The data come from the RNA Mapping Database (RMDB), library M2RFPK. The record gives the reactivity of an RNA of 207 nucleotides to 2A3. For 2A3 the reverse transcriptase was SuperScript II with manganese. For 2A3, 485 sequencing reads were counted. The reactions ran in a buffer of 150 mM KOAc, 10 mM MgCl2 and 150 mM bicine (pH 8.5), at 24 C.
RNA sequence: GGGAACGACUCGAGUAGAGUCGAAAAAGUUAGGUUCGCUAUGGUGCAACUCUUUAAGGCAAUAACGAACUAAUUCUAAGCCAGUAAUGGAGAAAUGCCAGGGUCACUAUCUAGCCAUAAUAGUGCUGUAAGUGACUUAGAUUCGUCUAAGUCACAAGACAAUUCGGUUCUUCGGAACCGAAUUGUCAAAAGAAACAACAACAACAAC
Reactivity to 2A3 in 0.01 (KOAc 150mM, MgCl2 10mM, bicine 150mM(pH8.5), 24C), signal-to-noise 1, nucleotides 027 to 156: a000g060u060u050a070g020g050u030u060c000g000c040u010a010u130g060g000u060g030c040a140a160c020u060c050u120u090u150a110a080g030g020c120a070a100u150a200a050c060g030a000a000c010u040a050a000u060u000c050u030a020a020g010c000c000a060g060u100a000a230u100g030g020a020g040a100a060a000u090g000c040c010a060g050g000g020u010c000a000c030u000a040u160c010u000a040g010c010c030a020u100a240a030u020a040g080u050g000c030u020g030u100a250a020g000u020g000a000c040u000u000a000g000a000u000u080c130g030u010c220u000a000a000g000u010c000a000c000a000a020